RNA sequence: GGGAACGACUCGAGUAGAGUCGAAAAAGGGAUGCCAGAAGGACUGUUUAAGAAGCUGAAAAUAGAGAAAUGAAUUUAUCUUCUCAUAGUUAGGCAGGGCACAGUAGAAGGAUGCUUAACAUUGCAAGCUGAUGGGAACAGCAGGUUGAUAUAGCUACCGCAGUAAUAUCUUCGGAUAUUACUGCGGAAAAGAAACAACAACAACAAC
Reactivity to 2A3 in 0.01 (KOAc 150mM, MgCl2 10mM, bicine 150mM(pH8.5), 24C), signal-to-noise 1, nucleotides 027 to 156: a030g060g000g010a000u080g000c070c090a050g000a000a000g000g140a070c010u060g110u180u040u030a220a190g020a130a050g000c030u070g030a030a030a050a000u190a090g010a040g020a010a200a080u100g050a070a030u070u160u300a110u180c000u120u000c000u000c010a140u030a150g040u100u050a000g010g000c000a000g030g050g020c020a010c000a000g030u010a000g030a090a000g010g020a000u090g020c060u030u030a050a030c020a150u000u160g090c060a110a000g000c000u020g000a150u160g060g010g040a060a000c000a000g010c000a050g010g010u070u010g160a000u010a010u060a300g040c080u030a060